[RMDB]
RNA sequence: GGGAACGACUCGAGUAGAGUCGAAAAAAUGUUCUGUUCGCAGAACAUUAAGCUGGUGUCGCGACCAGGCUGGAUGUCAGUACACGAAGUGCCAGAUCGGGAAUGCCUCCGGCUUCGGCCGGAGGAACAAAGAAACUCUAUUCGUAGAGUUUCUUUGAAAAGAAACAACAACAACAAC
Reactivity to DMS in 0.01 (KOAc 150mM, MgCl2 10mM, bicine 150mM(pH8.5), 24C), signal-to-noise 5, nucleotides 027 to 126: a020a010u000g000u000u000c010u000g010u000u010c200g030c010a010g010a010a010c000a010u010u000a050a110g020c030u000g000g010u010g010u000c070g010c080g010a110c050c050a090g010g000c020u000g010g000a100u000g010u000c030a080g010u000a070c070a090c040g000a060a070g010u000g000c020c030a050g010a100u000c080g010g000g000a110a080u010g000c010c000u000c000c000g000g000c010u000u010c220g030g030c000c000g010g000a000g000g000a020a030
Reactivity to 2A3 in 0.01 (KOAc 150mM, MgCl2 10mM, bicine 150mM(pH8.5), 24C), signal-to-noise 3, nucleotides 027 to 126: a000a000u000g000u000u000c010u020g020u020u040c220g010c050a010g000a000a000c000a000u010u020a030a010g010c030u000g000g050u040g080u130c020g010c010g080a050c010c040a030g060g000c020u060g040g030a130u120g060u170c040a010g060u080a040c050a010c050g090a120a010g030u040g140c010c020a030g000a110u100c060g010g020g100a090a060u130g030c000c010u000c010c000g040g040c020u020u060c200g060g020c000c010g020g020a010g020g000a000a000
Source: RMDB library M2PK50, as collected in RNAgym. This 177-nucleotide RNA was probed chemically with DMS and 2A3. For 2A3, 3,087 sequencing reads were counted. As a SHAPE reagent, 2A3 marks flexible, mostly unpaired nucleotides at the ribose 2'-OH. Reactivities are given for positions 27 through 126. DMS adducts were read by reverse transcription with MarathonRT.